[RMDB]
RNA sequence: GGGAACGACUCGAGUAGAGUCGAAAAAGCACGGUUUUUGGGGACGCAUUUUGUCCGUGCGGUAAUGCCCUCCUUUACACUUUCUCGCAUGGUGCGGGAGUGUGGAGAGGAAACAAAAGCUAGUCUCGAUAGGCGGUUAACUUCGGUUAACCGCCAACGAUAAUCAAUUGUUCGCAAUUGAUUAUCGAAAAGAAACAACAACAACAAC
Reactivity to DMS in 0.01 (KOAc 150mM, MgCl2 10mM, bicine 150mM(pH8.5), 24C), signal-to-noise 2, nucleotides 027 to 156: a100g020c010a010c010g010g010u010u000u020u010u010g020g010g030g000a070c020g020c080a150u000u000u000u000g040u000c010c000g010u000g030c010g000g010u000a050a060u010g000c010c000c000u010c050c010u010u000u000a050c010a030c020u010u000u000c000u000c000g030c000a300u010g030g030u010g050c020g000g000g000a030g030u000g040u010g010g010a040g000a140g010g000a050a030a030c020a020a050a060a070g000c050u010a100g010u000c020u000c040g010a200u000a120g030g030c000g000g000u000u000a000a010c010u000u000c300g010g000u000u000a000a000c000c010g020c000c000a000a000
Reactivity to 2A3 in 0.01 (KOAc 150mM, MgCl2 10mM, bicine 150mM(pH8.5), 24C), signal-to-noise 7, nucleotides 027 to 156: a000g000c000a000c000g000g000u010u000u010u010u030g060g000g010g010a010c020g040c130a210u010u010u000u000g010u000c000c000g010u000g000c010g020g050u150a050a030u190g030c000c000c000u040c000c000u040u070u060a010c000a000c010u090u150u030c020u030c010g040c020a110u270g280g050u290g140c000g000g000g000a000g000u000g000u000g010g000a030g000a010g000g010a040a020a000c000a000a010a000a000g040c010u040a020g010u000c000u000c000g020a160u140a100g000g000c000g000g000u010u000a000a000c000u040u050c200g040g000u000u000a000a000c010c000g000c000c000a000a000
Description: An RNA of 207 nucleotides, treated with DMS and 2A3 and read out base by base. It was measured as part of the RMDB library M2RFOK. For 2A3, 12,865 sequencing reads were counted. For 2A3 the reverse transcriptase was SuperScript II with manganese. Values cover nucleotides 27 to 156. Conditions: 150 mM KOAc, 10 mM MgCl2 and 150 mM bicine (pH 8.5), 24 C.